[RMDB]
Conditions: 150 mM KOAc, 10 mM MgCl2 and 150 mM bicine (pH 8.5), 24 C. The record gives the reactivity of an RNA of 207 nucleotides to DMS and 2A3. The 2A3 profile rests on 1,959 reads. For DMS the reverse transcriptase was MarathonRT. For DMS, 2,534 sequencing reads were counted. Source: RMDB library OK3TST, as collected in RNAgym. Reactivities are given for positions 27 through 156.
RNA sequence: GGGAACGACUCGAGUAGAGUCGAAAAAUGGGAGAGGAAGCCUGUCCCAGAAGGGUUGGGACUCAACUGGAGACAUGAUGCAUGCUUUAUCAGUGGGAUUUACUAACAUCAUACUGGUUCUUAAAUAGAGACGUGCCAGUAAAUAUUUAACAACCAGCAGUAAGCGUUACUUCGGUAACGCUUACUGAAAAGAAACAACAACAACAAC
Reactivity to DMS in 0.01 (KOAc 150mM, MgCl2 10mM, bicine 150mM(pH8.5), 24C), signal-to-noise 2, nucleotides 027 to 156: a060u000g040g010g000a090g000a140g020g020a120a140g050c030c010u000g030u000c000c000c000a100g000a080a080g000g010g030u020u020g010g000g030a090c020u010c010a050a100c080u000g050g010a110g050a140c050a000u040g000a100u010g010c040a040u000g000c070u020u010u000a060u000c040a090g020u030g000g000g010a160u000u000u000a160c080u000a030a070c020a070u000c050a160u000a150c030u010g040g050u010u010c040u000u000a000a060a090u000a040g020a190g000a100c190g000u000g020c180c080a160g020u010a020a040a070u000a060u000u000u000a020a040c050a070a040c020c010a010g000
Reactivity to 2A3 in 0.01 (KOAc 150mM, MgCl2 10mM, bicine 150mM(pH8.5), 24C), signal-to-noise 3, nucleotides 027 to 156: a000u030g000g020g030a060g030a000g030g050a090a030g000c020c040u050g060u040c010c000c000a000g040a030a050g040g010g000u150u090g010g010g040a040c010u020c100a080a060c060u060g000g020a070g010a040c030a060u140g030a020u060g030c030a010u040g040c070u120u080u120a120u130c030a010g020u030g010g040g030a020u080u080u060a050c010u020a060a080c030a110u220c010a010u020a120c010u010g000g000u000u010c010u050u070a040a120a080u100a040g050a010g000a040c070g060u080g050c010c000a000g010u000a010a060a010u030a000u010u070u040a030a030c030a000a000c000c000a010g010